[RMDB]
RNA sequence: GGGAACGACUCGAGUAGAGUCGAAAAGCGCAGCUGAAAGCCGAUAUCCAAGCGUGGCGCGCGACCGGCGCCCAGACGGCGAAGCCGUCGCUUCGGGUACUGCGGAAACGCUGGAACACGGUGAAAGUCCGUAUUGGAACUUCGGUUCCAAUACGGAAAAAGAAACAACAACAACAAC
Reactivity to 2A3 in 0.01 (KOAc 150mM, MgCl2 10mM, bicine 150mM(pH8.5), 24C), signal-to-noise 3, nucleotides 027 to 126: g050c100g030c080a140g000c020u070g080a120a040a020g040c000c010g050a070u080a040u300c010c020a120a040g000c000g010u020g010g090c060g000c000g010c020g050a020c000c040g040g020c000g030c060c050c000a060g000a000c000g000g020c090g010a100a020g000c010c010g010u020c010g000c040u020u030c020g030g000g050u180a120c050u120g030c010g020g000a040a120a000c000g000c000u000g000g010a050a020c140a000c080g000g010u060g050a100a030a020g090
Reactivity to DMS in 0.01 (KOAc 150mM, MgCl2 10mM, bicine 150mM(pH8.5), 24C), signal-to-noise 2, nucleotides 027 to 126: g030c050g030c110a020g040c020u000g000a090a120a300g000c020c000g010a060u030a020u030c000c020a110a140g000c010g010u000g000g030c000g010c000g000c030g010a110c040c010g030g000c130g000c050c210c070a220g000a020c000g000g000c000g030a140a260g020c020c000g050u000c030g010c070u000u020c070g000g010g010u010a210c210u000g000c000g000g000a230a050a000c000g000c000u010g000g000a110a040c150a020c000g000g000u020g000a050a150a010g000
Structure probing data (2A3 and DMS) for a 177-nucleotide construct. Reactivities are given for positions 27 through 126. Conditions: 150 mM KOAc, 10 mM MgCl2 and 150 mM bicine (pH 8.5), 24 C. The DMS profile rests on 2,120 reads.